[RMDB]
RNA sequence: GGGAACGACUCGAGUAGAGUCGAAAAGAAGACUGGCAUAUCCAGCACAGUGGUAACGCUCCACCGCGUAGGAUUUGUGCCUGCGACGAUUACCAGCGCCGCACCAGCCAACGGGAUAAGUGUUAGCGUGUCCAACUCGGUUCGCCGAGUUGGACACAAAAGAAACAACAACAACAAC
Reactivity to DMS in 0.01 (KOAc 150mM, MgCl2 10mM, bicine 150mM(pH8.5), 24C), signal-to-noise 1, nucleotides 027 to 126: g030a060a100g020a150c090u000g000g000c070a130u010a090u010c010c010a300g030c030a090c020a030g020u030g000g030u010a030a060c190g020c150u000c000c040a030c010c000g000c050g030u000a130g020g020a070u010u000u000g090u000g000c020c050u000g000c040g030a030c090g000a090u030u000a110c070c080a030g010c010g000c050c080g020c070a060c040c050a070g020c030c040a020a100c050g000g000g000a040u000a030a100g010u000g000u010u000a080g000c100
Reactivity to 2A3 in 0.01 (KOAc 150mM, MgCl2 10mM, bicine 150mM(pH8.5), 24C), signal-to-noise 1, nucleotides 027 to 126: g070a050a000g050a030c030u030g000g010c000a020u060a060u030c010c010a000g000c020a040c020a090g060u050g020g000u050a180a040c090g000c110u060c030c000a020c020c000g000c000g000u060a120g000g060a060u060u090u300g150u210g080c040c000u100g040c030g030a160c000g020a070u010u090a030c050c020a000g020c010g020c050c000g100c000a050c000c000a010g000c020c000a040a000c010g000g000g060a080u060a260a060g020u110g030u120u080a030g030c000

An RNA of 177 nucleotides, treated with DMS and 2A3 and read out base by base. The data come from the RNA Mapping Database (RMDB), library OK2TST.